[RMDB]
RNA sequence: GGGAACGACUCGAGUAGAGUCGAAAAGAUAUGGAGGCAGCGAUGAGCCUCGACUCGGAAACGAGUCAAGGCGAGCUGCUCCUAAGUCAAAGUAGGACGAUCUAGCUUCGGCUAGAUCGUCCUACAACAAAUAGUUAUAGUUCGCUAUAACUAUUUGAAAAGAAACAACAACAACAAC
Reactivity to DMS in 0.01 (KOAc 150mM, MgCl2 10mM, bicine 150mM(pH8.5), 24C), signal-to-noise 6, nucleotides 027 to 126: g010a050u000a300u010g000g010a030g010g000c000a000g010c010g000a130u010g000a300g010c000c000u000c030g010a000c000u000c000g010g000a080a090a200c010g010a010g010u000c000a010a000g010g010c000g000a120g000c000u000g010c000u000c000c000u000a040a180g010u000c050a090a110a140g010u000a010g000g010a020c000g010a010u000c000u000a000g000c010u000u010c170g020g000c000u000a010g000a010u000c000g010u000c000c000u000a000c000a060a120
Overview: An RNA of 177 nucleotides, treated with DMS and read out base by base. For DMS, 10,651 sequencing reads were counted. Source: RMDB library TTRDEL, as collected in RNAgym. For DMS the reverse transcriptase was MarathonRT.